[RMDB]
RNA sequence: GGGAACGACUCGAGUAGAGUCGAAAAAGCGUCGACGUACCUUCCAACCUUCCAAAGCAGCAAAAGCUGAACCUUCCAACCUUCCAAUCUACUCGAGAGGAGGAGGAGGAGGAGGAGGAGGAAUUAAACAAUAAUAUGGAUUCGUCCAUAUUAUUGUAAAAGAAACAACAACAACAAC
Reactivity to DMS in 0.01 (KOAc 150mM, MgCl2 10mM, bicine 150mM(pH8.5), 24C), signal-to-noise 5, nucleotides 027 to 126: a070g010c070g030u000c040g020a080c080g010u000a090c040c010u000u000c020c020a100a120c030c020u000u000c040c050a050a110a110g010c020a030g000c060a070a060a100a130g010c020u000g010a090a170c060c010u000u000c000c020a070a080c050c020u000u000c010c020a120a180u000c010u000a040c060u010c040g010a030g000a230g000g000a120g000g010a150g000g000a150g000g000a150g000g000a110g020g000a160g000g010a160g010g000a300a080u000u010a050a070
Reactivity to 2A3 in 0.01 (KOAc 150mM, MgCl2 10mM, bicine 150mM(pH8.5), 24C), signal-to-noise 8, nucleotides 027 to 126: a000g090c050g060u040c030g040a090c030g030u060a070c000c000u010u020c010c020a100a090c020c010u070u000c020c020a090a080a070g020c020a020g000c010a080a190a190a050g000c010u020g020a080a070c000c000u040u010c010c020a090a090c020c020u080u010c010c010a020a060u000c000u050a060c040u040c060g030a030g010a020g060g020a040g010g030a050g020g030a050g000g010a060g010g060a040g010g050a040g010g040a040g020g030a020a040u190u150a130a140